[RMDB]
RNA sequence: GGGAACGACUCGAGUAGAGUCGAAAACUUUUAUUGUUUAAUUGCACCUAGAUAUUUUUACAGUAAGAGUUCGUUAGGGCAGAUUAACGUCAUGGUUUUAGUACAUACAUUCUAAGAUCAAUAAGCAACAUAGGCAGCAAUUCGUUGCUGCCUAUGUAAAAGAAACAACAACAACAAC
Reactivity to DMS in 0.01 (KOAc 150mM, MgCl2 10mM, bicine 150mM(pH8.5), 24C), signal-to-noise 2, nucleotides 027 to 126: c000u000u000u000u000a010u010u000g010u010u000u020a020a050u010u000g000c110a110c200c180u000a100g010a160u010a000u030u000u000u000u020a000c030a030g010u010a010a020g000a010g000u000u000c040g010u000u010a030g040g020g000c030a070g010a120u000u000a020a040c060g010u010c100a140u010g020g020u000u000u000u000a020g030u000a110c200a160u010a120c190a130u010u000c020u010a010a030g010a020u000c010a030a100u010a070a100g010c100a120
Background:
The record gives the reactivity of an RNA of 177 nucleotides to DMS. Conditions: 150 mM KOAc, 10 mM MgCl2 and 150 mM bicine (pH 8.5), 24 C. For DMS the reverse transcriptase was MarathonRT. For DMS, 1,142 sequencing reads were counted. Values cover nucleotides 27 to 126.